[RMDB]
RNA sequence: GGGAACGACUCGAGUAGAGUCGAAAAGUAUUGAGCUCCACUUUAUCGGGGAGAAAGUGGAAGCGGAGAAAGACCUAACAAGUUGUAAGACUGCGCUGCCCUUGGGCCCAGGCUUCCCGCUGGAGGACGUUCAUCUUUUGUUCGCAAAAGAUGAACGAAAAGAAACAACAACAACAAC
Reactivity to 2A3 in 0.01 (KOAc 150mM, MgCl2 10mM, bicine 150mM(pH8.5), 24C), signal-to-noise 1, nucleotides 027 to 126: g090u070a120u110u200g040a010g000c010u000c010c000a020c010u010u000u080a240u200c050g000g000g070g000a040g020a000a000a000g020u030g000g040a130a060g020c020g000g000a010g040a070a030a000g040a030c000c000u020a110a060c100a120a060g020u050u000g090u240a070a010g060a070c020u000g000c060g020c060u060g020c000c010c000u030u050g000g040g020c000c010c030a010g000g020c000u000u020c010c000c010g000c040u010g010g030a020g060g010a030
Reactivity to DMS in 0.01 (KOAc 150mM, MgCl2 10mM, bicine 150mM(pH8.5), 24C), signal-to-noise 2, nucleotides 027 to 126: g010u010a070u000u020g010a220g010c030u000c000c010a030c020u000u000u000a070u000c070g000g030g030g020a140g020a050a000a010g010u000g010g000a060a040g020c020g020g010a110g000a080a110a110g000a090c000c010u000a050a070c220a070a080g000u010u000g010u010a050a090g020a040c030u000g000c090g000c070u000g000c010c010c010u010u000g020g000g020c040c010c030a040g000g010c050u010u010c010c010c010g010c090u010g000g010a090g000g030a230
This 177-nucleotide RNA was probed chemically with 2A3 and DMS. 2A3 adducts were read by reverse transcription with SuperScript II with manganese. DMS adducts were read by reverse transcription with MarathonRT. It was measured as part of the RMDB library OK2TST.